[RMDB]
RNA sequence: GGGAACGACUCGAGUAGAGUCGAAAAGUAAUAGAUACACGGAUGACGAGAAAGGGUGCGCUGAUAUCCGUGACGAAUGCUAGCAGUAAAUAGAAUAGCGCUCCUAAUACAACUAGCAACAAAAGGAUAAGGUAUCGUGAUGUCAAUCACAUUGCGAUCGUGAGGAUUUAUUCGUAAAUCCUCACGAAAAAGAAACAACAACAACAAC
Reactivity to 2A3 in 0.01 (KOAc 150mM, MgCl2 10mM, bicine 150mM(pH8.5), 24C), signal-to-noise 4, nucleotides 027 to 156: g000u040a010a150u060a170g100a040u090a070c000a000c010g020g000a020u030g070a060c100g030a050g100a150a110a050g070g010g010u040g000c000g020c010u040g040a030u010a020u130c000c000g020u000g020a000c030g090a100a010u060g030c030u020a010g000c070a030g050u150a030a140a090u110a100g080a090a080u030a050g020c020g010c000u010c010c000u040a080a010u100a020c020a030a010c040u030a010g010c020a030a080c030a050a100a030a030g070g010a070u070a150a040g090g030u040a020u040c000g000u010g020a010u010g000u020c050a040a090u130c010a060c000a010u000u010g000c000g030a030
Reactivity to DMS in 0.01 (KOAc 150mM, MgCl2 10mM, bicine 150mM(pH8.5), 24C), signal-to-noise 3, nucleotides 027 to 156: g000u000a160a140u010a080g020a250u000a110c000a070c030g020g020a030u010g010a300c130g000a150g020a070a100a070g010g030g020u020g000c020g030c040u000g020a220u000a060u000c020c000g030u000g000a080c090g000a100a130u000g020c010u000a010g010c030a130g050u000a060a070a150u000a090g000a110a100u000a120g000c030g050c010u000c010c010u000a050a130u000a060c060a100a040c040u000a030g020c000a050a120c120a030a080a090a100g010g000a090u000a080a120g010g010u000a050u000c010g060u000g010a020u000g010u000c040a110a150u000c170a120c000a020u000u000g020c000g020a030